RNA sequence: GGGAACGACUCGAGUAGAGUCGAAAAGAAAAGUUAACGACACCAGAACUGUUGAUACUAGAAGUAGGCUACCAGACCGAUAUAGAAGGCAAGGUCAGUUCUGACAUGAAAAAAUGGAGUGAUACUCUAAACCUCCUCAAACAUCUAGGAAUCAAGGCCACAUACUCUAAUUCGUUAGAGUAUGUGGAAAAGAAACAACAACAACAAC
Reactivity to 2A3 in 0.01 (KOAc 150mM, MgCl2 10mM, bicine 150mM(pH8.5), 24C), signal-to-noise 5, nucleotides 027 to 156: g050a010a090a000a000g050u090u090a140a010c070g040a030c030a040c070c040a020g020a090a030c030u080g040u140u070g050a050u050a090c020u050a020g070a140a030g060u100a010g050g000c020u040a060c050c000a080g060a140c000c000g030a020u020a010u010a230g150a100a030g020g000c060a070a050g030g000u020c030a020g010u120u090c010u020g040a040c030a140u180g080a030a030a030a040a030a040u070g000g000a010g020u040g000a050u080a180c010u000c010u070a040a060a070c010c000u060c020c000u050c050a080a120a080c030a040u010c020u080a020g040g070a050a020u060c030a030a010g100g010
Reactivity to DMS in 0.01 (KOAc 150mM, MgCl2 10mM, bicine 150mM(pH8.5), 24C), signal-to-noise 3, nucleotides 027 to 156: g000a050a100a070a110g030u000u000a080a090c050g020a100c040a060c010c030a120g010a060a120c040u000g020u000u000g030a100u000a110c050u020a080g010a100a140g010u010a050g030g000c010u000a090c080c050a070g040a190c020c020g000a210u000a110u010a110g000a080a060g010g030c010a090a100g010g010u000c020a070g000u000u000c030u000g000a090c060a110u000g000a000a010a050a060a060a110u000g010g020a050g000u010g040a120u000a200c060u000c030u010a030a090a100c030c010u000c010c020u000c060a070a040a060c050a070u000c040u000a050g000g000a120a070u000c050a020a090g010g000